[RMDB]
Structure probing data (DMS and 2A3) for a 170-nucleotide construct. Values cover nucleotides 27 to 129. For DMS, 12,752 sequencing reads were counted.

RNA sequence: GGGAACGACUCGAGUAGAGUCGAAAACGCGCGGGUCCUCUUCCUAGGUCCGGAAUCAACCUCCAUCCGAUCUGUCCGGAGCUUUUUCGGCGGAGGAGCUCCCUCCCCGUCCUUCCCUUUUCUUAUUACCCCGUCUUCUUCGGAAGACGGAAAAGAAACAACAACAACAAC
Reactivity to DMS in 0.01 (KOAc 150mM, MgCl2 10mM, bicine 150mM(pH8.5), 24C), signal-to-noise 5, nucleotides 027 to 129: c150g030c150g040c000g060g030g000u040c060c020u000c090u010u040c030c020u040a050g030g040u050c020c050g010g040a050a110u060c080a070a100c080c020u050c050c080a140u000c000c000g040a070u000c080u090g000u080c020c050g060g010a090g000c070u090u050u000u040u030c000g010g020c130g000g010a060g030g010a080g010c060u050c030c020c020u010c000c000c000c000g050u050c030c120u030u000c010c010c060u040u040u040u000c040u020u090a180u060u050a150c220c040
Reactivity to 2A3 in 0.01 (KOAc 150mM, MgCl2 10mM, bicine 150mM(pH8.5), 24C), signal-to-noise 6, nucleotides 027 to 129: c060g020c010g000c020g010g000g010u050c000c010u010c000u010u020c000c010u020a040g030g050u000c000c000g000g020a010a060u130c020a030a090c020c020u100c070c010a140u100c090c030g070a080u020c060u130g100u010c020c010g010g010a050g020c020u110u090u020u030u150c030g000g000c040g010g000a000g020g010a010g010c030u100c020c000c000u030c000c000c000c000g020u020c000c000u010u030c000c000c000u040u040u010u000c030u020u070a160u060u150a120c020c010